[RMDB]
RNA sequence: GGGAACGACUCGAGUAGAGUCGAAAAGCCAGCACGUUUCCUCUGCAGUUUGUGGCAGUGUCUGACACGCUCGCUGGCCUGCUGCCAUUCCAUUUGGCCGUUGCUUUCAGGCUGUUGCUGCUGCAACAACUUAUCUAACAUUCGUGUUAGAUAAGUUAAAAGAAACAACAACAACAAC
Reactivity to DMS in 0.01 (KOAc 150mM, MgCl2 10mM, bicine 150mM(pH8.5), 24C), signal-to-noise 9, nucleotides 027 to 126: g010c010c010a020g010c020a180c070g010u000u000u000c010c010u000c060u000g010c020a080g010u000u010u010g030u010g010g010c000a020g010u000g010u010c130u000g010a050c130a050c070g010c200u000c160g010c010u000g000g000c010c050u000g000c060u000g000c020c030a070u000u010c110c120a160u010u010u000g010g010c010c080g010u000u000g010c090u000u000u000c070a090g000g010c020u000g010u000u000g010c010u000g010c080u000g000c020a040a070c100
Reactivity to 2A3 in 0.01 (KOAc 150mM, MgCl2 10mM, bicine 150mM(pH8.5), 24C), signal-to-noise 9, nucleotides 027 to 126: g010c000c000a000g010c020a010c040g020u010u030u010c010c010u030c040u050g000c020a130g040u140u300u230g240u260g070g000c010a010g010u010g080u080c080u040g020a010c010a010c120g030c030u090c090g000c010u020g010g000c000c000u030g010c010u030g000c010c000a040u160u070c080c030a100u080u040u060g030g000c010c020g050u060u060g010c030u040u080u070c050a040g050g000c030u040g050u050u050g000c020u030g020c020u060g000c010a010a010c010